[RMDB]
RNA sequence: GGGAACGACUCGAGUAGAGUCGAAAAGCGCGUGAGGGCGGUGACGAUUAUUUCUUGUAAAACAAAAUGAGGUCGUUGGCGGAGUGAAAAGGCUCACCGUCGUUUUGUUGAGAAACGGUCUGUGCGCCGAGGCAAUUACUUUCGAGUAAUUGCCUCGAAAAGAAACAACAACAACAAC
Reactivity to DMS in 0.01 (KOAc 150mM, MgCl2 10mM, bicine 150mM(pH8.5), 24C), signal-to-noise 1, nucleotides 027 to 126: g000c050g010c060g010u000g000a080g000g000g010c050g000g030u000g000a050c040g000a090u000u000a090u000u000u000c050u000u000g010u030a060a060a060a160c080a080a020a060a040u000g010a070g010g010u000c030g010u020u000g000g000c040g000g000a100g020u000g000a040a000a040a170g010g020c010u020c000a040c010c090g000u000c000g000u000u000u000u020g010u010u010g010a110g000a010a050a040c030g000g000u020c030u000g020u030g000c140g020c000

Structure probing data (DMS) for a 177-nucleotide construct. It was measured as part of the RMDB library OK2TRN. The RNA was probed in 150 mM KOAc, 10 mM MgCl2 and 150 mM bicine (pH 8.5) at 24 C. High DMS reactivity at an A or C suggests that its Watson-Crick edge is free.